[RMDB]
RNA sequence: GGGAACGACUCGAGUAGAGUCGAAAACACAAUGUGCGCCAUUAACAUUGUUUAUGCAAGCACGUUUCGCAAUGUACGUCGCAGAAACAUUGCCAACACAAAUACGCUUCACGAUGUGCGGCACAGAAAAAGCUCGCGCACUUCGGUGCGCGAGCAACUAGAUUGCUCUGUUCGCAGAGCAAUCUAGAAAAGAAACAACAACAACAAC
Reactivity to 2A3 in 0.01 (KOAc 150mM, MgCl2 10mM, bicine 150mM(pH8.5), 24C), signal-to-noise 1, nucleotides 027 to 156: c130a000c020a060a120u040g000u020g010c030g040c030c000a080u110u110a090a050c050a120u100u150g080u130u150u110a160u120g020c080a020a010g050c030a000c020g010u000u000u000c030g000c000a000a000u000g010u030a010c120g100u030c120g050c150a070g120a010a070a000c000a000u000u000g000c010c040a140a000c090a000c040a050a220a020u150a060c110g020c040u020u020c040a020c080g040a020u030g060u100g000c010g040g110c030a010c020a040g080a030a150a000a000a000g060c000u000c000g000c020g000c000a020c000u000u060c160g150g010u030g040c040g000c000g010a000g000c000a000a000